[RMDB]
RNA sequence: GGGAACGACUCGAGUAGAGUCGAAAAGCAGUAUACUGCUACUUGUGUGAGAAUACUUUUAGUACAAGCGAGUACACGCAGUAUAGUGCCACUUGUGUGAGAAUACUUUUAGUACAAGCGAGUACACGUCCUGCUUGUUUUUCGAAACAAGCAGGACAAAAGAAACAACAACAACAAC
Reactivity to 2A3 in 0.01 (KOAc 150mM, MgCl2 10mM, bicine 150mM(pH8.5), 24C), signal-to-noise 3, nucleotides 027 to 126: g000c010a030g040u030a010u000a020c000u000g020c000u010a010c000u000u000g000u000g030u090g080a200g110a140a120u110a080c000u060u070u120u260a090g000u000a020c010a070a000g010c000g000a000g000u070a020c140a010c200g000c000a000g000u000a000u020a030g170u040g000c000c000a050c010u040u010g000u000g000u000g130a140g110a160a050u130a120c000u000u130u130u130a050g000u010a020c010a140a000g060c030g120a010g020u000a020c010a000c010
Reactivity to DMS in 0.01 (KOAc 150mM, MgCl2 10mM, bicine 150mM(pH8.5), 24C), signal-to-noise 1, nucleotides 027 to 126: g000c000a000g000u000a020u000a000c000u000g000c000u030a000c000u020u030g000u090g000u040g010a080g000a120a090u030a000c070u000u000u000u070a090g040u010a030c050a050a290g000c020g000a140g000u000a100c220a070c260g000c110a000g040u000a000u030a020g030u000g000c000c110a150c080u000u000g000u000g010u060g110a040g020a150a170u050a110c090u000u070u000u000a200g070u000a010c000a190a300g010c030g000a130g070u000a000c050a070c210